An RNA of 177 nucleotides, treated with DMS and 2A3 and read out base by base. The RNA was probed in 150 mM KOAc, 10 mM MgCl2 and 150 mM bicine (pH 8.5) at 24 C. Source: RMDB library TTRINS, as collected in RNAgym. DMS adducts were read by reverse transcription with MarathonRT.
RNA sequence: GGGAACGACUCGAGUAGAGUCGAAAAGAUAUGGACCCAUGAACUACUCUAUGCGAUCGUUUGGCGAAGAACAGCCUCGGAAACGAGGCUGGGAGCCAAACGAUCCAUAGAGCAUGGGUCCUAAGUCGCUAAUUAUGAAGUUCGCUUCAUAAUUAGCAAAAGAAACAACAACAACAAC
Reactivity to DMS in 0.01 (KOAc 150mM, MgCl2 10mM, bicine 150mM(pH8.5), 24C), signal-to-noise 4, nucleotides 027 to 126: g000a090u000a300u000g010g010a030c000c000c000a020u000g010a090a060c100u020a300c010u000c000u010a010u000g010c260g000a010u000c000g010u000u000u000g000g010c000g010a100a190g010a090a220c000a000g010c000c000u010c000g000g000a110a110a250c020g000a010g010g010c000u000g000g010g000a140g000c010c000a000a000a010c000g000a000u000c000c000a000u000a000g010a020g000c010a000u000g000g000g010u000c010c000u000a010a060g010u010c090
Reactivity to 2A3 in 0.01 (KOAc 150mM, MgCl2 10mM, bicine 150mM(pH8.5), 24C), signal-to-noise 4, nucleotides 027 to 126: g070a030u180a070u290g000g010a000c020c000c010a000u010g000a020a120c190u300a050c000u300c010u010a020u030g090c270g050a000u000c020g000u000u000u000g040g000c040g240a300a030g030a090a020c000a000g010c000c000u010c010g030g030a090a080a070c010g000a010g020g020c010u000g000g000g000a000g000c010c000a000a010a000c000g000a000u000c000c000a000u000a000g010a000g000c000a000u000g000g020g000u000c000c000u000a000a000g010u010c060